[RMDB]
RNA sequence: GGGAACGACUCGAGUAGAGUCGAAAAGGAACUAUGUUCAGGCAUGAAGCCUCCACGUGCGUGCGAAAGCACCCGGAAACGGCUGAGCAUAGUUCCGAGCUGAAGGAGGCACGGCUCAAAAUAAAAACACUCGGUCACUAUUCGUAGUGACCGAGUGAAAAGAAACAACAACAACAAC
Reactivity to 2A3 in 0.01 (KOAc 150mM, MgCl2 10mM, bicine 150mM(pH8.5), 24C), signal-to-noise 2, nucleotides 027 to 126: g000g000a000a000c000u000a000u010g000u000u000c000a000g000g000c000a000u010g020a140a030g000c000c000u000c000c000a030c010g000u000g000c000g000u010g000c000g050a140a030a010g010c000a000c000c000c000g010g040a040a110a040c010g000g000c000u000g000a010g000c000a000u000a000g000u000u000c000c000g000a000g000c000u040g020a110a060g000g010a000g000g010c040a000c000g010g000c000u000c000a030a030a000a020u300a020a070a010a000a000
Reactivity to DMS in 0.01 (KOAc 150mM, MgCl2 10mM, bicine 150mM(pH8.5), 24C), signal-to-noise 1, nucleotides 027 to 126: g000g010a010a000c000u000a000u040g000u000u020c010a000g050g110c010a000u000g010a100a240g070c020c000u020c000c000a300c000g070u000g000c000g000u000g000c000g000a020a210a120g020c010a000c000c000c000g000g000a100a090a170c010g000g010c030u000g000a040g000c020a010u000a000g020u000u000c000c000g000a000g080c020u050g040a100a130g010g040a000g000g000c050a300c030g000g000c070u000c060a130a030a190a210u030a060a000a000a170a100

An RNA of 177 nucleotides, treated with 2A3 and DMS and read out base by base.
For DMS, 1,173 sequencing reads were counted.
DMS adducts were read by reverse transcription with MarathonRT.
Values cover nucleotides 27 to 126.
For 2A3, 2,706 sequencing reads were counted.
Conditions: 150 mM KOAc, 10 mM MgCl2 and 150 mM bicine (pH 8.5), 24 C.
For 2A3 the reverse transcriptase was SuperScript II with manganese.